[RMDB]
RNA sequence: GGGAACGACUCGAGUAGAGUCGAAAAGGGAAGAAGUAUACAGAGAUCUAGAACUUGAAAGUGCAUUGUGAACAUGGAACAGCAAGGGGUUUCGUGCUGCUGAGAGGUAGUCUGGGUUUAGCUGAAGAGGGAACACAGGUUUGCUCCUCAUUUGUUCGGUUCGUAAUCUGUUCGCAGAUUACGAACCAAAAGAAACAACAACAACAAC
Reactivity to 2A3 in 0.01 (KOAc 150mM, MgCl2 10mM, bicine 150mM(pH8.5), 24C), signal-to-noise 1, nucleotides 027 to 156: g040g060g040a060a010g040a040a040g010u110a080u050a160c090a030g140a020g000a030u060c030u080a040g040a070a040c060u100u070g110a080a040a010g050u020g040c030a060u070u050g040u070g080a050a040c010a100u060g060g010a030a070c000a030g010c020a000a080g000g000g000g040u000u060u080c050g010u160g010c020u010g020c030u060g030a050g020a000g120g000u020a020g050u030c000u040g010g000g050u020u090u050a010g040c040u040g030a010a010g000a000g050g010g020a030a000c080a000c010a020g160g000u070u020u070g010c000u050c040c000u100c040a040u000u000u050g080u060u020c010